Notes: Chemical mapping of a 177-nucleotide RNA with DMS and 2A3. For 2A3 the reverse transcriptase was SuperScript II with manganese. The RNA was probed in 150 mM KOAc, 10 mM MgCl2 and 150 mM bicine (pH 8.5) at 24 C. For DMS, 1,867 sequencing reads were counted.
RNA sequence: GGGAACGACUCGAGUAGAGUCGAAAAUGAAACUCUAAAACAUACCAAUUUCCUCAGACAUGAGGAUCACCCAUGUCCGUCUAAGUUAGGAGAGGUGAAGAAUUCGACCACCUAGAGAAAAAAAAAACUAUCUUAGUACGUUCGCGUACUAAGAUAGAAAAGAAACAACAACAACAAC
Reactivity to DMS in 0.01 (KOAc 150mM, MgCl2 10mM, bicine 150mM(pH8.5), 24C), signal-to-noise 2, nucleotides 027 to 126: u010g000a130a140a090c030u010c000u000a040a080a240a160c040a060u010a140c030c030a060a040u000u000u000c000c000u000c010a030g010a040c110a030u000g000a050g000g010a130u010c250a060c010c030c000a020u000g010u000c000c040g010u000c030u010a030a040g000u000u000a070g000g000a080g000a060g000g000u000g000a060a050g010a070a140u000u000c040g000a080c070c030a010c020c010u010a050g000a060g020a040a010a010a030a000a000a060a070a060a140
Reactivity to 2A3 in 0.01 (KOAc 150mM, MgCl2 10mM, bicine 150mM(pH8.5), 24C), signal-to-noise 2, nucleotides 027 to 126: u040g000a050a030a020c060u000c050u160a060a070a020a030c010a050u120a120c030c040a070a160u040u070u030c000c000u010c010a040g030a090c010a080u050g010a050g040g020a030u080c050a100c000c000c000a030u040g040u000c020c020g040u010c090u130a080a090g080u110u090a030g040g020a070g000a030g010g030u030g010a060a040g030a060a120u090u090c050g050a030c030c010a030c000c010u020a010g000a000g000a130a080a020a000a000a000a010a000a010a010